Structure probing data (2A3 and DMS) for a 177-nucleotide construct. DMS adducts were read by reverse transcription with MarathonRT. For DMS, 600 sequencing reads were counted. Values cover nucleotides 27 to 126. Conditions: 150 mM KOAc, 10 mM MgCl2 and 150 mM bicine (pH 8.5), 24 C.
RNA sequence: GGGAACGACUCGAGUAGAGUCGAAAAACACAAGCUCAAAAGAUAAAAAAACUGUGCAGGCUUUCAACAGUGGUUCGAUACAAGCAUUCAUCACAAUCAAUAUAGAAGAUCAUGAUGUGAUUUUCACGCAACAACGUAUAUUCGUAUACGUUGUUGCAAAAGAAACAACAACAACAAC
Reactivity to 2A3 in 0.01 (KOAc 150mM, MgCl2 10mM, bicine 150mM(pH8.5), 24C), signal-to-noise 2, nucleotides 027 to 126: a040c060a020c020a050a080g030c030u040c040a040a090a080a030g030a080u210a050a300a000a000a050a050a110c050u030g050u050g000c000a140g100g010c060u060u260u200c050a070a100c020a070g040u050g060g000u080u060c050g020a010u020a170c050a020a080g060c000a070u080u100c000a010u050c010a010c000a050a070u070c010a050a020u220a060u050a190g130a070a020g000a020u090c050a010u070g210a010u170g090u010g090a040u040u010u000u100c070a060c100
Reactivity to DMS in 0.01 (KOAc 150mM, MgCl2 10mM, bicine 150mM(pH8.5), 24C), signal-to-noise 1, nucleotides 027 to 126: a080c030a100c120a070a060g030c060u000c050a020a080a050a090g000a130u010a010a010a060a110a050a000a080c120u020g000u000g010c040a060g000g000c040u010u000u010c060a050a070c150a020g030u010g010g030u020u000c050g020a090u070a070c100a090a110g010c040a020u010u000c030a030u000c000a010c080a170a060u000c090a020a060u000a090u020a120g000a070a020g000a010u010c060a040u010g010a120u050g020u000g000a000u000u000u000u000c020a180c200